Description:
An RNA of 177 nucleotides, treated with 2A3 and DMS and read out base by base. The reactions ran in a buffer of 150 mM KOAc, 10 mM MgCl2 and 150 mM bicine (pH 8.5), at 24 C.
RNA sequence: GGGAACGACUCGAGUAGAGUCGAAAAGAUAUGGAUCGCCACUGGAGCUACACUUCGGAAACGAAGUGUUAGCGUUGAAAGUGGACGAUCCUAAGUCAAAACUAACCGUCCUUCGGGACGGUUAGAAGAAUAUAUUGUUCUUCGGAACAAUAUAUUCAAAAGAAACAACAACAACAAC
Reactivity to 2A3 in 0.01 (KOAc 150mM, MgCl2 10mM, bicine 150mM(pH8.5), 24C), signal-to-noise 3, nucleotides 027 to 126: g000a000u020a010u050g000g000a010u010c000g010c010c000a010c010u030g080g130a060g000c000u010a000c000a010c010u000u000c000g010g000a010a010a000c000g000a010a010g010u000g000u030u050a000g010c000g000u050u090g060a030a020a000g010u000g000g030a020c010g000a000u000c010c000u000a000a000g000u000c010a000a030a120a190c000u010a000a000c000c000g000u010c010c010u060u130c300g140g000g000a000c000g000g010u000u000a000g000a010a000
Reactivity to DMS in 0.01 (KOAc 150mM, MgCl2 10mM, bicine 150mM(pH8.5), 24C), signal-to-noise 6, nucleotides 027 to 126: g010a020u010a060u010g000g010a010u000c000g030c000c000a010c000u000g020g020a060g020c000u000a030c000a000c000u000u000c000g010g000a010a010a040c000g010a020a000g020u000g010u000u010a000g020c010g030u000u020g000a080a300a020g020u000g010g000a080c030g010a000u000c000c000u000a000a070g000u000c000a130a110a140a300c010u000a000a000c000c000g000u000c000c000u000u020c260g030g010g010a000c000g000g000u000u000a000g000a060a130